[RMDB]
RNA sequence: GGGAACGACUCGAGUAGAGUCGAAAAAUGCCGACGCAAUAAAAGGACGGGGAUUGUAUAUGUGUUCCUAUUCAAACAAUGCAAUUCCUAAAUGGUAGAAGAUGUUGCGAAGCCAGUACCGCCUGGCUCGAAAAUGACUAUUCGUAGUCAUUUUCGAAAAAGAAACAACAACAACAAC
Reactivity to DMS in 0.01 (KOAc 150mM, MgCl2 10mM, bicine 150mM(pH8.5), 24C), signal-to-noise 7, nucleotides 027 to 126: a090u010g010c030c010g030a140c070g010c040a070a050u010a060a050a130a140g000g010a120c180g010g000g010g000a010u000u000g010u000a030u000a090u010g010u010g010u010u000c060c070u000a110u030u040c140a060a060a060c050a020a030u000g000c000a020a020u000u000c000c000u000a060a060a070u030g010g010u020a060g010a080a090g010a090u000g000u000u000g000c040g000a090a090g000c010c000a010g000u010a090c150c190g020c300c000u000g000g000c020
Reactivity to 2A3 in 0.01 (KOAc 150mM, MgCl2 10mM, bicine 150mM(pH8.5), 24C), signal-to-noise 6, nucleotides 027 to 126: a000u090g040c010c010g020a040c020g000c030a020a060u110a130a140a040a030g100g020a030c070g000g000g000g000a000u000u000g020u010a020u000a080u070g050u010g050u100u140c060c050u100a140u090u200c060a030a100a060c000a020a010u010g000c000a000a000u020u010c000c000u030a000a040a070u160g050g010u080a050g050a150a010g040a090u150g010u040u030g010c010g020a010a000g000c000c000a010g010u100a230c000c030g020c010c010u000g000g000c000